[RMDB]
RNA sequence: GGGAACGACUCGAGUAGAGUCGAAAAGCGGCAUCAAGAAACGGACUUGAUGGUUGACGCCUGUUUUUAAAGUUAGAGACGUCGCGACCCUCGCACUUGUGGAGUCGUUCUUGACUUUUACUUUGGUCGCUUGAUGUUUCUCUCGUCUUCCCGUUCGCGUACUGUACAGCUUCGGCUGUACAGUACGAAAAGAAACAACAACAACAAC
Reactivity to DMS in 0.01 (KOAc 150mM, MgCl2 10mM, bicine 150mM(pH8.5), 24C), signal-to-noise 1, nucleotides 027 to 156: g010c060g030g050c030a020u020c010a030a060g020a030a180a200c200g030g020a190c010u010u000g000a030u010g000g040u000u000g010a090c000g000c000c010u000g050u000u000u030u010u010a040a100a100g010u010u000a060g010a060g020a000c040g040u000c040g000c020g030a050c040c020c090u030c040g020c030a110c130u000u000g040u010g020g010a060g010u010c020g040u010u010c090u000u000g040a040c090u010u010u000u010a030c050u010u010u010g010g010u000c000g010c010u000u000g040a120u000g020u000u000u000c000u000c030u000c000g030u000c090u000u000c000c000c000g030u000u000c040g080
Reactivity to 2A3 in 0.01 (KOAc 150mM, MgCl2 10mM, bicine 150mM(pH8.5), 24C), signal-to-noise 2, nucleotides 027 to 156: g020c000g060g030c000a000u000c010a020a010g070a030a160a050c270g090g080a060c030u030u030g010a010u040g000g080u060u120g090a050c000g000c030c020u060g130u060u080u020u030u160a180a150a030g010u020u060a000g000a000g000a000c000g000u010c010g000c000g010a010c010c050c010u080c100g050c010a100c130u200u210g100u160g100g010a030g000u000c000g070u080u090c040u020u050g010a030c000u000u100u090u300a070c030u110u100u170g000g000u000c010g000c000u000u220g020a040u060g010u030u040u000c000u000c020u040c040g120u000c050u010u020c010c020c010g010u030u040c030g000

The record gives the reactivity of an RNA of 207 nucleotides to DMS and 2A3. The 2A3 profile rests on 1,389 reads. The data come from the RNA Mapping Database (RMDB), library PDB130. Reactivities are given for positions 27 through 156.